Chemical mapping of a 207-nucleotide RNA with 2A3 and DMS. Reactivities are given for positions 27 through 156. It was measured as part of the RMDB library RNAMAK. DMS adducts were read by reverse transcription with MarathonRT.
[RMDB]
RNA sequence: GGGAACGACUCGAGUAGAGUCGAAAACAACGCAUUCGUGCGUUGAGUACUCCUAAGUCACUUGGUAGUCGUGCUACUUGGAUUUAUCUCGGAAACGAGAUUGUCAGUACACGACUAUAAUCAAGUGAUAUGGAUUGAUUAAGGAUUCGUCCUUAAACUCGAAUGCUUAAUUCGUUAAGCAUUCGAGAAAAGAAACAACAACAACAAC
Reactivity to 2A3 in 0.01 (KOAc 150mM, MgCl2 10mM, bicine 150mM(pH8.5), 24C), signal-to-noise 4, nucleotides 027 to 156: c010a000a000c000g020c010a030u040u080c290g180u080g000c000g000u000u000g010a010g020u050a070c040u030c000c000u030a130a050g000u010c000a000c010u000u010g020g000u050a000g000u000c010g000u010g090c120u040a010c020u090u230g160g000a070u200u290u110a030u060c000u000c010g030g030a110a090a070c020g000a000g010a010u000u010g000u000c000a000g000u010a000c000a000c000g000a000c010u000a000u000a010a010u030c000a000a000g010u000g010a010u020a030u040g010g000a040u090u260g090a080u090u080a000a000g030g020a030u050u120c240g080u080c060c000u040u040a080a070a060
Reactivity to DMS in 0.01 (KOAc 150mM, MgCl2 10mM, bicine 150mM(pH8.5), 24C), signal-to-noise 3, nucleotides 027 to 156: c000a020a000c030g050c010a080u000u010c300g070u000g040c010g040u010u000g010a210g020u000a150c130u000c000c010u000a120a240g020u000c010a010c000u000u000g020g040u000a020g030u000c000g020u000g010c030u000a020c010u000u010g040g020a080u000u000u000a020u000c020u000c000g020g000a120a120a300c000g010a010g010a000u000u000g000u000c030a040g030u010a030c020a030c010g000a050c010u000a010u000a150a080u000c010a020a020g020u010g010a010u000a170u000g000g010a150u000u000g010a180u000u000a060a010g010g000a050u000u010c250g000u000c000c000u000u000a020a070a300